[RMDB]
About this RNA: This 177-nucleotide RNA was probed chemically with DMS and 2A3.
RNA sequence: GGGAACGACUCGAGUAGAGUCGAAAAGAAUAUAAGAGCGCAGUAAGUGUGAGAGCAAACUGCGCCCGGACUGUAGGAUCCGGUGGCACAGCAACGCUCAUUCACAAAACGCUGUGCCACAUGAAGACAUCAUGAGGGUAUUCGUACCCUCAUGAUGAAAAGAAACAACAACAACAAC
Reactivity to DMS in 0.01 (KOAc 150mM, MgCl2 10mM, bicine 150mM(pH8.5), 24C), signal-to-noise 5, nucleotides 027 to 126: g000a120a060u080a070u020a100a090g000a120g000c000g000c000a010g000u000a040a260g000u020g000u010g000a160g000a160g030c020a080a200a040c000u000g000c010g020c000c000c000g000g000a050c060u000g040u010a090g000g020a230u000c010c020g020g010u000g000g000c020a000c000a000g000c010a090a110c170g020c070u010c020a080u030u020c180a070c200a070a050a110a150c250g020c000u000g030u000g000c010c010a010c030a040u000g000a140a100g000a190
Reactivity to 2A3 in 0.01 (KOAc 150mM, MgCl2 10mM, bicine 150mM(pH8.5), 24C), signal-to-noise 8, nucleotides 027 to 126: g020a040a020u190a010u040a120a030g020a030g010c000g000c010a000g010u080a180a020g010u050g040u080g110a050g000a000g040c010a030a000a070c000u000g000c000g000c000c000c010g010g000a020c040u150g080u260a080g060g100a110u000c010c020g010g000u030g000g000c000a000c000a000g000c010a030a120c090g010c020u020c020a120u200u110c050a040c040a070a100a030a020c100g000c000u000g000u010g000c000c010a020c000a020u140g050a050a030g070a030

The data come from the RNA Mapping Database (RMDB), library OK1LIB. DMS adducts were read by reverse transcription with MarathonRT. For DMS, 8,228 sequencing reads were counted.